[RMDB]
Chemical mapping of a 207-nucleotide RNA with 2A3 and DMS.

RNA sequence: GGGAACGACUCGAGUAGAGUCGAAAAUUCCGGCUGGUCAGUUCGCCGGCUUCUCGCUGGCCGGAUUUGAAGUGCUUAACGUCGAUUUCGUGCGCGUUUUCAAUUGCAAAUUCGUCAAGUGCUUCGGCAACGGCCUUGUCUUUGGGACGCAGAACCCACAUCAUUUAGGGUUCGCCCUAAAUGAUGUAAAAGAAACAACAACAACAAC
Reactivity to 2A3 in 0.01 (KOAc 150mM, MgCl2 10mM, bicine 150mM(pH8.5), 24C), signal-to-noise 4, nucleotides 027 to 156: u100u000c000c000g020g000c020u090g050g020u100c070a120g050u130u090c060g020c030c010g020g010c000u120u080c050u030c030g030c060u040g000g020c010c000g050g020a050u040u070u170g010a020a000g000u020g050c030u070u030a100a020c050g030u030c060g140a060u040u150u180c170g020u130g040c070g030c050g070u030u020u100u250c110a130a100u150u130g020c030a000a010a050u080u070c010g010u020c020a030a030g010u010g040c010u020u020c010g020g000c040a050a050c040g000g000c010c000u050u110g010u000c010u020u070u060g020g030g000a050c040g030c130a030g040a200a100c010c000c010
Reactivity to DMS in 0.01 (KOAc 150mM, MgCl2 10mM, bicine 150mM(pH8.5), 24C), signal-to-noise 2, nucleotides 027 to 156: u000u000c010c020g030g030c000u000g000g000u010c080a140g010u000u030c090g020c020c030g030g010c090u000u010c030u000c070g010c060u000g010g010c010c010g000g010a070u000u000u000g010a050a020g040u000g000c030u010u000a020a040c020g040u000c150g010a150u000u000u000c110g040u020g030c070g000c110g010u000u020u000u000c090a100a150u020u010g000c020a050a050a210u010u000c000g000u000c020a020a050g090u000g020c030u010u000c020g000g030c020a110a070c010g010g020c020c020u010u000g000u000c050u000u000u000g010g020g010a110c030g020c050a210g010a090a150c020c000c030